The record gives the reactivity of an RNA of 177 nucleotides to DMS and 2A3.
2A3 adducts were read by reverse transcription with SuperScript II with manganese.
The reactions ran in a buffer of 150 mM KOAc, 10 mM MgCl2 and 150 mM bicine (pH 8.5), at 24 C.
The DMS profile rests on 11,190 reads.
RNA sequence: GGGAACGACUCGAGUAGAGUCGAAAAAAGUGUUGCUUUCAUUGCCAAGUUUGUUUCAUAACAAAAGCCUUAGGCAUCUCCUAUGGCAGGAAGAAGCGGAGACAGCGACGAAGAGCUCAUCAGAACAGAUAUCAAUCAUCUUCGGAUGAUUGAUAUCAAAAGAAACAACAACAACAAC
Reactivity to DMS in 0.01 (KOAc 150mM, MgCl2 10mM, bicine 150mM(pH8.5), 24C), signal-to-noise 6, nucleotides 027 to 126: a080a050g020u010g010u000u000g000c050u000u010u020c030a080u020u010g020c020c020a100a110g000u010u000u000g020u000u000u010c070a090u020a070a080c080a030a060a080a140g000c020c010u000u010a030g010g010c300a140u040c200u000c010c000u000a050u010g010g030c030a050g000g000a070a060g000a040a060g010c040g000g010a040g000a100c180a070g000c050g000a030c070g020a040a070g020a090g010c030u000c040a080u000c070a060g010a070a110c230a090
Reactivity to 2A3 in 0.01 (KOAc 150mM, MgCl2 10mM, bicine 150mM(pH8.5), 24C), signal-to-noise 9, nucleotides 027 to 126: a010a010g150u110g020u060u060g020c050u040u010u040c030a060u040u100g030c030c040a120a100g020u000u030u040g090u020u040u080c190a200u130a190a060c020a040a090a030a020g010c010c000u020u020a020g010g020c050a140u060c080u070c070c000u040a060u050g040g000c030a020g060g020a090a060g010a040a010g020c010g000g010a030g010a020c020a010g010c000g030a040c020g020a070a030g020a010g050c030u020c040a120u060c020a050g050a120a040c030a060